[RMDB]
RNA sequence: GGGAACGACUCGAGUAGAGUCGAAAACACAUCAUACUAGGCCAAGUUUCAUUCGCAAAGUAUUGAAAACAUGUUUGGAUACGUCGAAACCGGCCAAAAGUCGAUCUUUGCUUGAAACAUUAAAUGAAGCUAAUUACCAUUUCGAUGGUAAUUAGCUAAAAGAAACAACAACAACAAC
Reactivity to 2A3 in 0.01 (KOAc 150mM, MgCl2 10mM, bicine 150mM(pH8.5), 24C), signal-to-noise 6, nucleotides 027 to 126: c050a010c000a060u100c020a060u100a210c080u070a050g130g070c040c040a110a060g000u000u020u000c030a050u070u070c040g000c010a020a010a020g030u150a070u020u050g030a050a040a060a040c060a090u160g090u050u000u000g030g000a070u150a270c020g010u020c010g130a110a020a070c040c010g020g000c000c000a010a020a000a000g020u010c000g010a010u010c010u000u010u010g000c000u000u030g020a020a010a000c030a080u100u150a090a100a120u140g080a050
Reactivity to DMS in 0.01 (KOAc 150mM, MgCl2 10mM, bicine 150mM(pH8.5), 24C), signal-to-noise 6, nucleotides 027 to 126: c080a080c120a090u000c050a050u000a090c090u000a110g010g000c050c080a130a130g000u000u000u000c020a030u010u010c250g020c020a020a010a000g010u020a020u000u000g000a070a080a090a120c220a160u010g010u000u000u000g010g000a070u020a070c030g020u010c070g000a040a110a120c300c030g000g000c010c010a010a010a030a100g010u000c020g010a020u000c010u000u000u000g010c010u010u000g010a010a010a020c020a130u010u000a050a080a090u010g000a110